[RMDB]
RNA sequence: GGGAACGACUCGAGUAGAGUCGAAAACUUUCUUGCAUGUGGAGAAUUUCCUGAGGUUUCACCAGACUGAAGAGAUUCUGAGUUCUUGAAGUGAUGGAGAUAAAGAUCUUGUUGUCAUAAAACAGCACGGAAUUAAUACAUUCGUGUAUUAAUUCCGAAAAGAAACAACAACAACAAC
Reactivity to 2A3 in 0.01 (KOAc 150mM, MgCl2 10mM, bicine 150mM(pH8.5), 24C), signal-to-noise 3, nucleotides 027 to 126: c010u000u040u030c020u000u060g060c020a080u070g030u100g070g050a030g010a120a080u010u030u040c030c010u050g050a040g100g030u040u090u130c050a040c070c020a030g020a050c010u040g020a090a000g020a010g030a080u070u060c040u090g080a100g060u080u030c020u060u050g040a110a030g020u030g060a100u060g060g000a060g010a070u080a100a200a010g060a060u020c020u050u050g020u040u050g010u040c020a030u130a190a150a020a020c020a000g080c030a000
Reactivity to DMS in 0.01 (KOAc 150mM, MgCl2 10mM, bicine 150mM(pH8.5), 24C), signal-to-noise 4, nucleotides 027 to 126: c070u000u000u000c020u000u000g000c030a050u000g010u010g000g010a050g000a050a080u000u000u000c040c030u010g010a210g010g010u000u000u000c080a100c130c100a110g010a080c040u010g010a140a100g000a060g000a060u000u000c080u000g000a150g000u000u010c020u000u010g010a120a060g030u010g000a070u000g010g000a060g010a060u000a070a110a060g010a090u000c070u010u010g000u010u000g010u010c050a090u020a050a070a060a080c080a030g010c090a130